About this RNA
Structure probing data (2A3 and DMS) for a 177-nucleotide construct. Conditions: 150 mM KOAc, 10 mM MgCl2 and 150 mM bicine (pH 8.5), 24 C. High 2A3 reactivity points to a flexible backbone, as in loops and unpaired stretches. High DMS reactivity at an A or C suggests that its Watson-Crick edge is free. It was measured as part of the RMDB library M2PK50. Values are in units of 0.01, from 0 to 300, in steps of 10.

RNA sequence: GGGAACGACUCGAGUAGAGUCGAAAAGCUUGUAGCUUCGGCUACAAGCAUCUAAAAUCAGCGGUAAAUAUUUACGAGGCGUUACCGCUGAACGCCUCGAUACAACCACAUCAUUCGUGAUGUGGAAACCGUAUCAAGUGUUCGCACUUGAUACGGUAAAAGAAACAACAACAACAAC
Reactivity to 2A3 in 0.01 (KOAc 150mM, MgCl2 10mM, bicine 150mM(pH8.5), 24C), signal-to-noise 2, nucleotides 027 to 126: g030c000u000u000g000u000a000g000c000u050u030c300g160g010c000u000a010c000a010a000g030c000a000u010c000u040a090a090a010a050u040c010a010g000c020g120g170u190a020a090a030u130a170u140u210u270a100c050g010a010g000g000c000g010u010u010a110c000c000g000c000u010g000a000a000c000g020c000c000u000c000g010a020u020a180c060a070a070c010c020a000c000a010u000c010a000u010u080c170g120u030g010a010u010g000u000g000g020a020a050
Reactivity to DMS in 0.01 (KOAc 150mM, MgCl2 10mM, bicine 150mM(pH8.5), 24C), signal-to-noise 1, nucleotides 027 to 126: g010c000u010u000g000u030a000g000c000u000u020c210g030g020c000u010a010c010a010a010g000c000a030u010c040u000a030a080a070a120u000c020a020g000c000g030g010u010a050a050a040u000a010u010u020u010a110c080g010a030g000g000c030g020u000u000a070c030c000g000c010u000g000a020a030c030g010c000c010u000c030g010a300u030a050c150a090a180c000c000a000c000a000u000c000a010u010u000c150g010u000g000a010u000g020u000g000g000a030a050